[RMDB]
Source information: An RNA of 177 nucleotides, treated with 2A3 and DMS and read out base by base. Conditions: 150 mM KOAc, 10 mM MgCl2 and 150 mM bicine (pH 8.5), 24 C. It was measured as part of the RMDB library TTRDEL. DMS adducts were read by reverse transcription with MarathonRT.
RNA sequence: GGGAACGACUCGAGUAGAGUCGAAAAGAUAUGGAAGUGAGUAGCUAGCUACUCGGAAACGAGAUAGCUUGGACCUACCACUUCCUAAGUCAAAACGAAUUAUUUGGGUUCGCCCAAAUAAUUCGAAGAUAUAAACAAACUUCGGUUUGUUUAUAUCAAAAGAAACAACAACAACAAC
Reactivity to 2A3 in 0.01 (KOAc 150mM, MgCl2 10mM, bicine 150mM(pH8.5), 24C), signal-to-noise 3, nucleotides 027 to 126: g010a010u050a020u130g000g000a010a010g010u020g060a110g030u010a000g040c070u010a000g000c000u010a010c000u000c010g010g030a030a030a010c010g010a010g080a300u010a000g010c000u040u120g080g080a100c010c000u000a010c010c000a000c000u000u000c000c000u000a020a000g010u000c030a010a000a080a160c020g010a010a010u000u000a010u000u000u020g000g000g040u040u080c240g160c030c000c010a000a010a000u000a000a000u010u000c000g010a020a010
Reactivity to DMS in 0.01 (KOAc 150mM, MgCl2 10mM, bicine 150mM(pH8.5), 24C), signal-to-noise 5, nucleotides 027 to 126: g000a030u000a300u010g000g010a010a000g010u000g000a120g010u000a030g000c070u000a010g010c000u000a010c000u000c000g010g000a070a050a120c000g010a010g000a150u000a000g000c000u000u000g040g010a080c300c000u000a010c000c000a020c000u000u000c000c000u000a000a070g010u000c010a080a090a130a220c010g000a020a010u000u000a000u000u000u000g000g000g020u000u010c260g010c010c000c000a000a010a010u000a000a000u000u000c000g000a040a040